[RMDB]
RNA sequence: GGGAACGACUCGAGUAGAGUCGAAAACUUGAGCUUCUUGUUGGUUCGCCGGAGAUCCUUCUCGAGAAUUCGCCUUUUCUUCCUUUCUUCCACCCACUGCUCGAGGAUCUCCUCCCUCCCCUUCGAGUACGCGACCAGUUCGCUGGUCGCAAAAGAAACAACAACAACAAC
Reactivity to 2A3 in 0.01 (KOAc 150mM, MgCl2 10mM, bicine 150mM(pH8.5), 24C), signal-to-noise 3, nucleotides 027 to 129: c020u040u070g020a000g060c000u030u020c010u040u110g030u040u060g070g000u030u030c040g010c060c040g050g000a000g000a020u070c010c030u100u100c040u030c040g050a060g010a020a130u110u050c070g050c030c000u070u070u010u020c030u060u070c010c000u040u080u020c010u000u000c000c020a040c010c000c000a040c010u050g010c000u000c010g000a030g010g000a030u000c010u000c000c000u020c000c000c000u010c000c000c000c000u030u090c020g010a010g020u040a040c070
Reactivity to DMS in 0.01 (KOAc 150mM, MgCl2 10mM, bicine 150mM(pH8.5), 24C), signal-to-noise 2, nucleotides 027 to 129: c070u010u010g010a200g040c100u010u060c070u000u030g020u000u000g000g000u020u030c100g030c110c110g060g000a090g020a030u000c010c020u060u140c120u000c020g000a070g000a080a090u030u030c140g000c060c030u040u050u000u060c000u020u030c050c030u030u000u020c050u000u000c020c030a050c060c000c040a120c130u000g040c050u020c060g040a070g020g100a110u020c050u030c040c000u010c000c000c000u010c030c020c000c050u010u060c050g030a000g030u040a080c070
This 170-nucleotide RNA was probed chemically with 2A3 and DMS. Reactivities are rounded to 0.1 and cut off at 0 and 3. Reactivities are given for positions 27 through 129. The RNA was probed in 150 mM KOAc, 10 mM MgCl2 and 150 mM bicine (pH 8.5) at 24 C. 2A3 adducts were read by reverse transcription with SuperScript II with manganese.